[RMDB]
RNA sequence: GGGAACGACUCGAGUAGAGUCGAAAAGAGAGGCAGUUCAACCCCGCCGGUGAGCGUAACUUCACGCUCGUUAUCGACAACAACAUCGCUCCGAUGAUGGCUGAUGACGGUUGGAACAUCAAGUACCUCAAGCCGAAGGAAGAUGGGGAUCAGCCCCACCAAAGGCAGUGUUCGCACUGCCUUUGGUAAAAGAAACAACAACAACAAC
Reactivity to 2A3 in 0.01 (KOAc 150mM, MgCl2 10mM, bicine 150mM(pH8.5), 24C), signal-to-noise 1, nucleotides 027 to 156: g060a010g020a000g020g010c030a050g030u000u120c090a070a070c040c070c000c000g060c030c070g010g010u200g000a000g000c020g050u020a160a120c050u120u090c140a010c040g000c010u000c010g000u070u020a040u030c000g100a050c060a110a010c010a050a060c000a050u000c010g020c100u150c060c060g060a070u070g000a010u000g070g000c000u010g010a050u100g060a070c020g060g000u100u120g080g100a070a010c020a000u200c030a050a000g090u100a070c000c000u060c000a000a050g030c020c010g050a040a000g020g010a000a030g020a060u090g000g000g000g000a010u050c020a030g060c000c000c000c000
Reactivity to DMS in 0.01 (KOAc 150mM, MgCl2 10mM, bicine 150mM(pH8.5), 24C), signal-to-noise 1, nucleotides 027 to 156: g020a110g010a060g010g080c020a040g000u010u000c060a180a130c070c010c030c070g000c040c000g080g000u000g030a010g000c020g000u000a110a150c170u000u010c110a060c100g060c000u000c000g000u000u000a010u010c020g020a100c000a110a150c100a060a090c000a230u010c030g000c170u000c120c120g000a050u000g000a190u010g040g000c060u010g070a010u020g030a080c050g020g060u000u000g010g020a030a170c070a070u000c060a030a050g020u000a040c090c000u010c030a080a150g000c000c010g030a100a070g020g000a080a130g000a130u010g010g070g000g010a070u040c060a150g000c010c000c000c000
Structure probing data (2A3 and DMS) for a 207-nucleotide construct. It was measured as part of the RMDB library OK3TST. The DMS profile rests on 1,635 reads. DMS adducts were read by reverse transcription with MarathonRT.